An RNA of 177 nucleotides, treated with 2A3 and DMS and read out base by base.
DMS adducts were read by reverse transcription with MarathonRT.
For 2A3 the reverse transcriptase was SuperScript II with manganese.
The RNA was probed in 150 mM KOAc, 10 mM MgCl2 and 150 mM bicine (pH 8.5) at 24 C.
[RMDB]
RNA sequence: GGGAACGACUCGAGUAGAGUCGAAAAAGGUAAAGAGUUAGAAGAUUAGUGAAGCGCAAUGAAUGAAAUGCAUUCUUUUAUGUGAAAAUACAAAAAGAAUAAAUGUCCUGCAGGUGAAUGGGGCUGUCCUAAUUGCAACAUUCGUGUUGCAAUUAGGAAAAGAAACAACAACAACAAC
Reactivity to 2A3 in 0.01 (KOAc 150mM, MgCl2 10mM, bicine 150mM(pH8.5), 24C), signal-to-noise 3, nucleotides 027 to 126: a000g100g010u150a040a070a030g070a030g040u120u140a030g040a140a000g010a160u020u100a050g050u050g060a060a010g030c000g000c070a020a050u090g090a080a020u070g010a050a140a030u050g030c010a000u010u030c000u020u060u050u020a210u060g020u000g120a200a170a040a020u170a040c020a000a040a010a000a000g010a000a000u070a070a060a030u060g010u020c040c040u060g020c040a000g030g100u030g030a050a080u090g000g020g000g000c010u030g010u000
Reactivity to DMS in 0.01 (KOAc 150mM, MgCl2 10mM, bicine 150mM(pH8.5), 24C), signal-to-noise 2, nucleotides 027 to 126: a040g040g020u030a080a040a040g000a030g000u030u010a090g000a120a110g000a050u010u020a090g020u000g020a080a060g000c070g030c080a050a030u030g020a080a040u010g040a050a040a020u010g000c120a040u000u000c010u000u010u000u000a130u010g010u010g010a110a050a070a130u030a040c020a020a060a010a020a000g010a000a030u010a060a070a080u020g000u000c050c010u010g020c050a040g020g030u010g000a080a040u010g000g000g000g020c060u000g020u000